Description:
This 207-nucleotide RNA was probed chemically with 2A3 and DMS. It was measured as part of the RMDB library M2RFPK. 2A3 adducts were read by reverse transcription with SuperScript II with manganese. The RNA was probed in 150 mM KOAc, 10 mM MgCl2 and 150 mM bicine (pH 8.5) at 24 C.
[RMDB]
RNA sequence: GGGAACGACUCGAGUAGAGUCGAAAAGAAACUCGUUUCGCGUUGGCUGCCUAAUUCAAGGAAUUAGCGUGCCUUCAUGCUAAGGGUUUGAUAUCUGCUAAAACCUGGUGCAUUCAUCAAUGCAGGUCUCAUCCAAAUGCCUUCGGGCAUUUGGAAAACCUAUUUUCAUGUUCGCAUGAAAAUAGGUAAAAGAAACAACAACAACAAC
Reactivity to 2A3 in 0.01 (KOAc 150mM, MgCl2 10mM, bicine 150mM(pH8.5), 24C), signal-to-noise 7, nucleotides 027 to 156: g060a010a050a010c040u030c060g080u050u100u080c090g010c030g020u020u020g010g000c040u070g040c030c020u020a020a010u030u030c120a260a150g180g020a070a020u000u010a010g020c060g080u050g000c010c000u020u030c070a080u110g000c010u020a010a030g020g000g000u000u010u010g010a000u020a030u050c020u010g000c020u040a030a030a060a070c020c020u030g010g040u060g040c090a170u080u240c020a040u100c060a120a100u150g000c010a000g030g000u020c020u020c040a070u010c010c000a000a000a000u000g000c010c000u020u040c100g030g000g000c000a000u010u000u000g000g000a000a010a010
Reactivity to DMS in 0.01 (KOAc 150mM, MgCl2 10mM, bicine 150mM(pH8.5), 24C), signal-to-noise 4, nucleotides 027 to 156: g000a110a050a030c010u010c010g020u000u000u000c050g040c060g020u030u000g010g000c020u000g000c160c010u000a030a020u000u000c060a180a140g030g020a050a010u000u000a020g010c020g020u000g020c020c010u000u000c030a090u020g030c030u000a220a150g020g000g010u000u010u010g010a160u000a050u010c040u010g000c050u010a120a050a030a050c010c020u010g010g080u000g010c030a080u010u000c070a070u000c070a130a210u000g020c000a050g020g000u000c080u020c040a180u000c000c010a010a010a010u010g010c000c010u000u000c300g070g020g010c000a000u000u010u000g000g000a000a010a040
The 2A3 profile rests on 9,410 reads.